Conditions: 150 mM KOAc, 10 mM MgCl2 and 150 mM bicine (pH 8.5), 24 C. An RNA of 177 nucleotides, treated with DMS and 2A3 and read out base by base. For 2A3 the reverse transcriptase was SuperScript II with manganese. Reactivities are given for positions 27 through 126. DMS adducts were read by reverse transcription with MarathonRT.

RNA sequence: GGGAACGACUCGAGUAGAGUCGAAAAUAUUCCAGUGUUACUGGUUUUAAAACUGGCCCAGAGUUACUAGUACUUUGCCCAAGAUCACGUAGUAAUGCCCAGAAACAGGGUGCAAACCCAGAAUGUCGUCGUGAGAAUAUUUCGAUAUUCUCACGACAAAAGAAACAACAACAACAAC
Reactivity to DMS in 0.01 (KOAc 150mM, MgCl2 10mM, bicine 150mM(pH8.5), 24C), signal-to-noise 2, nucleotides 027 to 126: u020a170u000u010c020c010a030g020u010g030u010u010a040c010u000g010g000u000u010u000u000a030a020a110a060c060u000g020g000c010c020c010a130g000a130g010u000u000a050c050u000a050g010u000a030c060u010u000u000g020c040c050c050a080a090g010a080u000c080a070c060g010u000a040g000u010a050a040u000g020c020c020c030a090g000a110a110a090c240a070g000g010g020u000g000c220a030a100a060c030c000c000a110g000a160a090u010g000u000c200
Reactivity to 2A3 in 0.01 (KOAc 150mM, MgCl2 10mM, bicine 150mM(pH8.5), 24C), signal-to-noise 2, nucleotides 027 to 126: u210a070u080u000c000c000a000g050u080g030u130u160a020c010u010g060g050u000u010u050u200a070a130a050a050c070u050g110g000c030c000c000a050g020a020g030u050u040a020c050u030a030g070u000a030c040u030u090u220g010c000c010c000a000a040g020a070u100c050a030c100g030u000a040g020u000a110a020u010g000c000c000c000a020g060a010a070a040c070a050g000g010g000u050g010c030a000a070a120c010c010c020a040g130a080a220u170g060u160c020